[RMDB]
RNA sequence: GGGAACGACUCGAGUAGAGUCGAAAAUAGAUCAGGAGUUUGAGAAUGGCUUAGCUGGUGGUUUUUCAUGAAGCUGCAGUUGAGAUGUUGGCUAGGCCUGUUCUCACGGAAAGGCUACACUGGUGCUGGACCAUCCAUUUCUAUGAUGGCUUAUUCAGCCUAAAGUUCAGUUCGCUGAACUUUAGGCAAAAGAAACAACAACAACAAC
Reactivity to DMS in 0.01 (KOAc 150mM, MgCl2 10mM, bicine 150mM(pH8.5), 24C), signal-to-noise 1, nucleotides 027 to 156: u010a030g000a140u030c020a110g010g030a090g010u000u010u000g010a060g040a060a020u000g020g040c030u010u000a050g000c000u000g020g020u000g000g010u000u000u000u000u070c140a170u000g010a070a090g010c010u000g030c040a100g090u000u000g020a100g030a090u000g000u000u020g040g000c000u000a060g020g010c050c000u000g020u000u000c000u000c040a110c070g010g010a020a050a120g040g010c000u000a050c090a070c120u000g020g030u010g000c060u000g000g020a040c020c030a030u000c020c120a120u000u020u010c120u010a060u020g010a030u000g030g000c050u010u010a100u000u010c140a220
Reactivity to 2A3 in 0.01 (KOAc 150mM, MgCl2 10mM, bicine 150mM(pH8.5), 24C), signal-to-noise 2, nucleotides 027 to 156: u090a010g030a020u060c060a030g100g060a020g030u110u200u200g010a000g010a000a040u050g000g000c000u010u000a000g000c010u050g040g050u020g000g030u030u050u040u030u090c100a080u230g070a050a030g000c040u060g000c030a090g070u050u060g070a100g000a100u040g050u290u060g000g010c000u000a000g010g010c000c010u010g020u000u010c000u000c000a000c010g020g030a030a030a010g020g030c060u070a030c030a030c100u120g060g000u060g010c000u070g020g050a100c010c030a000u020c010c000a110u060u230u030c030u070a050u120g030a010u010g030g000c010u050u140a110u060u160c050a010

Record summary:
The data come from the RNA Mapping Database (RMDB), library OK3TST. Structure probing data (DMS and 2A3) for a 207-nucleotide construct. For DMS, 2,176 sequencing reads were counted. The reactions ran in a buffer of 150 mM KOAc, 10 mM MgCl2 and 150 mM bicine (pH 8.5), at 24 C. For DMS the reverse transcriptase was MarathonRT. For 2A3, 936 sequencing reads were counted. For 2A3 the reverse transcriptase was SuperScript II with manganese.